[RMDB]
RNA sequence: GGGAACGACUCGAGUAGAGUCGAAAAGGGCAGCUUUCCUCUGUUCGACUGGUGAUGCCUGGGCCGAGUACCAUGCUCUUCUUCAAGCCAAGCUCUACGAUCGAGCGCACAAGAUUCUUGUGGAGAAGUUGGCGCCAGAAGCGGUCUUGAGGGACGAGCAAUCGAAUUUAUUCGUAAAUUCGAUUGCAAAAGAAACAACAACAACAAC
Reactivity to DMS in 0.01 (KOAc 150mM, MgCl2 10mM, bicine 150mM(pH8.5), 24C), signal-to-noise 2, nucleotides 027 to 156: g030g000g050c030a070g010c050u000u000u000c100c010u020c060u000g010u000u000c020g000a100c050u000g050g070u000g030a060u000g010c030c040u020g000g010g040c000c030g040a160g040u000a040c060c050a090u010g020c000u000c000u010u000c040u000u000c030a130a090g020c000c180a050a130g000c000u000c010u000a090c050g020a150u000c140g010a070g020c030g020c090a110c050a030a150g010a140u000u000c030u000u000g040u000g020g010a070g000a030a090g030u000u010g000g000c010g000c070c010a170g020a040a090g030c060g000g040u000c030u000u030g000a110g040g020g000a080c100g010a140
Reactivity to 2A3 in 0.01 (KOAc 150mM, MgCl2 10mM, bicine 150mM(pH8.5), 24C), signal-to-noise 4, nucleotides 027 to 156: g010g010g020c030a020g030c070u010u070u080c020c010u020c060u040g080u040u070c050g060a060c060u060g020g000u080g060a100u120g060c010c050u030g000g020g000c030c050g010a040g020u050a050c020c040a050u080g020c030u000c000u070u020c000u030u060c060a040a050g030c040c010a040a020g020c010u000c000u050a070c080g070a100u110c060g020a030g090c070g040c020a040c020a140a110g020a230u170u080c040u110u170g030u070g030g040a060g020a080a050g050u060u060g030g000c010g020c030c010a020g010a040a000g020c020g000g020u010c000u050u060g000a030g000g020g020a030c070g030a020
The record gives the reactivity of an RNA of 207 nucleotides to DMS and 2A3. The DMS profile rests on 4,275 reads.